[RMDB]
RNA sequence: GGGAACGACUCGAGUAGAGUCGAAAAAGAUAUGGAGAGCGUUCUUGACAUGCGGGACGGCCGGGGUAUGGUCGGAAACGACCAUACAAGAAUGUUUUCGCAACAGCAAGUUCGCUCUCCUAAGUCAUCAUGGUCUGAUGUUCGCAUCAGACCAUGAAAAAGAAACAACAACAACAAC
Reactivity to DMS in 0.01 (KOAc 150mM, MgCl2 10mM, bicine 150mM(pH8.5), 24C), signal-to-noise 2, nucleotides 027 to 126: a090g000a150u010a300u010g000g040a070g060a020g000c020g010u000u000c000u010u010g020a090c100a200u020g090c000g000g000g000a000c000g000g000c300c050g000g000g050g020u000a000u000g010g010u040c000g000g000a070a090a150c000g000a000c000c030a020u060a000c000a080a130g010a120a300u010g000u020u000u000u010c030g040c000a060a120c270a220g020c030a000a050g000u000u000c000g000c000u000c000u010c000c020u020a050a080g000u000c050a090

Record summary: Structure probing data (DMS) for a 177-nucleotide construct. High DMS reactivity at an A or C suggests that its Watson-Crick edge is free. DMS adducts were read by reverse transcription with MarathonRT. It was measured as part of the RMDB library TTRDES. The reactions ran in a buffer of 150 mM KOAc, 10 mM MgCl2 and 150 mM bicine (pH 8.5), at 24 C. Values cover nucleotides 27 to 126.